[RMDB]
RNA sequence: GGGAACGACUCGAGUAGAGUCGAAAAUACAUAGUGGAAACACCAGGGCCACAUUACUUAGGUAUCAAGAUGAACGUCGUGGAACUAGCUUAUUAAAUUGGCAAAACAUAGACACCAAGAAAUAGAAUACUGAAUAAAGGUUCGCCUUUAUUCAGUAAAAAGAAACAACAACAACAAC
Reactivity to DMS in 0.01 (KOAc 150mM, MgCl2 10mM, bicine 150mM(pH8.5), 24C), signal-to-noise 4, nucleotides 027 to 126: u000a130c090a120u010a070g020u010g020g000a110a100a050c070a090c040c050a090g010g000g000c010c040a050c040a060u000u000a040c080u000u000a050g030g010u010a050u000c070a040a090g020a070u000g010a060a090c130g000u000c040g020u000g000g000a070a070c060u010a070g000c040u000u000a120u000u000a030a060a100u000u000g010g000c020a070a070a060a040c080a050u010a070g010a070c060a070c040c030a040a050g000a060a030a090u010a070g000a100a150
Reactivity to 2A3 in 0.01 (KOAc 150mM, MgCl2 10mM, bicine 150mM(pH8.5), 24C), signal-to-noise 3, nucleotides 027 to 126: u120a000c060a030u100a040g050u040g010g030a090a050a010c020a020c030c010a040g030g050g000c030c020a010c000a010u050u130a070c050u040u060a030g070g000u040a050u160c020a060a020g010a190u060g030a060a020c040g040u040c010g030u060g010g030a020a020c020u020a050g000c020u080u060a050u080u140a220a200a150u070u050g000g000c020a040a000a090a000c020a030u080a070g030a010c010a000c050c000a020a010g080a050a110a030u130a040g050a040a010